An RNA of 207 nucleotides, treated with 2A3 and DMS and read out base by base. The RNA was probed in 150 mM KOAc, 10 mM MgCl2 and 150 mM bicine (pH 8.5) at 24 C. 2A3 adducts were read by reverse transcription with SuperScript II with manganese.
[RMDB]
RNA sequence: GGGAACGACUCGAGUAGAGUCGAAAAAUGGCGAAUGCAUGGGGAACUACAUCCGUGUCGCGAGUUCGAUUCUCGCCAGGGCCUGGUCCUGUAGCUCAGUUGGUAGAGCAAGCUGUUCCCCGGACACAAAAUCCAGCUAGGUUCGCCUAGCUGGAAAUCUCUCAUACGUGUUCGCACGUAUGAGAGAAAAAGAAACAACAACAACAAC
Reactivity to 2A3 in 0.01 (KOAc 150mM, MgCl2 10mM, bicine 150mM(pH8.5), 24C), signal-to-noise 2, nucleotides 027 to 156: a000u080g140g010c040g060a150a050u120g050c070a090u060g020g000g000g030a020a010c020u100a020c130a110u030c080c090g080u070g050u040c010g000c000g010a000g000u000u000c010g000a020u000u000c000u000c000g030c000c010a010g010g000g000c010c170u150g070g040u000c000c020u020g000u000a020g010c000u020c030a090g020u190u150g040g150u180a020g020a000g020c000a000a040g050c070u040g020u060u000c010c000c000c040g000g000a000c010a000c010a030a120a000a020u000c000c000a000g000c010u000a000g020g020u060u040c060g050c070c000u000a000g000c010u000g000g000a020a000a000
Reactivity to DMS in 0.01 (KOAc 150mM, MgCl2 10mM, bicine 150mM(pH8.5), 24C), signal-to-noise 2, nucleotides 027 to 156: a070u000g010g010c020g040a030a000u010g010c050a060u020g000g030g000g000a090a120c030u010a030c000a020u010c060c000g000u000g060u010c020g030c000g030a000g000u000u010c050g010a300u000u000c010u000c020g040c030c030a070g000g010g010c000c080u010g080g030u000c000c010u010g030u000a030g000c000u000c000a120g020u000u010g020g010u000a050g000a020g010c010a150a130g010c050u000g020u000u000c010c000c020c010g010g000a000c080a100c050a020a020a080a230u000c030c000a020g000c000u000a000g000g090u010u010c200g060c010c000u000a000g010c010u000g010g000a010a010a020